Overview
An RNA of 207 nucleotides, treated with 2A3 and DMS and read out base by base. Conditions: 150 mM KOAc, 10 mM MgCl2 and 150 mM bicine (pH 8.5), 24 C. It was measured as part of the RMDB library OK3TST. The DMS profile rests on 8,111 reads. Values cover nucleotides 27 to 156. The 2A3 profile rests on 3,730 reads. 2A3 is a SHAPE reagent: it acylates the 2'-hydroxyl of flexible nucleotides of all four kinds.
[RMDB]
RNA sequence: GGGAACGACUCGAGUAGAGUCGAAAAUGGCAAAGUAUGGGCUCUUUGCAAGCGCAGAUUUUCAUCUUGUUCAUUUGUAGCCCCAAGAUCUCCAUAAUGCAUGACAAUAAGGUGUGUUUCCUGAGUUAAAGGAGCUAUAAAGAGAUUUGCUAGGGUGCCCAUAAUCAGUAUUCGUACUGAUUAUGGGAAAAGAAACAACAACAACAAC
Reactivity to 2A3 in 0.01 (KOAc 150mM, MgCl2 10mM, bicine 150mM(pH8.5), 24C), signal-to-noise 6, nucleotides 027 to 156: u070g030g010c020a030a010a070g010u040a100u070g020g030g000c010u020c010u070u070u070g030c050a080a040g060c050g000c070a030g020a080u080u070u180u150c060a080u080c070u080u100g020u090u100c030a060u070u040u090g070u070a030g010c010c010c000c000a010a040g010a080u000c030u020c030c030a030u080a170a040u140g050c040a020u080g040a090c020a060a130u120a170a040g050g000u050g010u020g020u090u110u030c010c020u070g030a050g060u030u070a080a090a070g020g020a040g010c020u040a020u100a160a120a010g080a010g010a040u050u060u070g020c040u050a030g050g020g000u050g040
Reactivity to DMS in 0.01 (KOAc 150mM, MgCl2 10mM, bicine 150mM(pH8.5), 24C), signal-to-noise 3, nucleotides 027 to 156: u010g010g020c030a050a050a100g020u000a090u000g010g000g010c010u000c000u010u000u000g020c040a090a100g000c050g050c050a060g010a090u000u000u000u000c050a080u000c050u000u000g020u010u010c030a130u010u000u000g030u010a090g030c020c010c010c020a080a150g000a070u000c010u000c010c020a080u000a070a050u000g010c040a080u010g020a110c090a070a130u000a100a110g030g030u020g020u020g010u000u000u000c030c010u010g000a170g010u000u000a060a110a100g000g000a060g010c030u000a090u000a050a070a080g010a130g010a110u000u000u000g020c040u000a100g010g030g060u000g010